[RMDB]
RNA sequence: GGGAACGACUCGAGUAGAGUCGAAAACCUAUAGUUUCUACUGCAAAACGUAUAAUUUAGUUCCCACAUAUACUAAAAAACGUGUCCUUAACUCUCUCUGUCAGAUUAGUUGUAGGUGGCUUAAACUCAAAGCUGCAAUAUUCGUAUUGCAGCUUUGAAAAGAAACAACAACAACAAC
Reactivity to 2A3 in 0.01 (KOAc 150mM, MgCl2 10mM, bicine 150mM(pH8.5), 24C), signal-to-noise 3, nucleotides 027 to 126: c010c000u050a090u060a130g010u020u000u000c040u050a120c010u040g030c050a050a080a130a030c050g030u060a060u040a090a140u060u110u110a030g020u010u060c010c060c020a020c030a000u170a000u070a050c060u140a050a030a030a030a000a040c040g060u040g060u080c000c000u030u000a070a020c000u000c010u000c000u010c000u030g040u080c010a030g010a160u100u180a060g010u010u030g010u010a060g050g030u020g000g000c000u050u070a070a100a010c010u010
Reactivity to DMS in 0.01 (KOAc 150mM, MgCl2 10mM, bicine 150mM(pH8.5), 24C), signal-to-noise 2, nucleotides 027 to 126: c000c000u000a050u000a070g000u000u000u030c000u010a170c100u000g040c100a050a140a080a040c110g020u010a020u020a010a150u030u000u010a150g000u000u020c000c000c000a130c300a160u000a060u020a060c120u000a000a110a120a090a030a000c080g000u000g020u020c000c010u010u010a090a070c010u020c060u000c080u020c000u020g020u000c070a060g000a140u000u010a040g000u010u000g050u000a070g010g040u060g030g050c070u000u010a080a090a130c060u000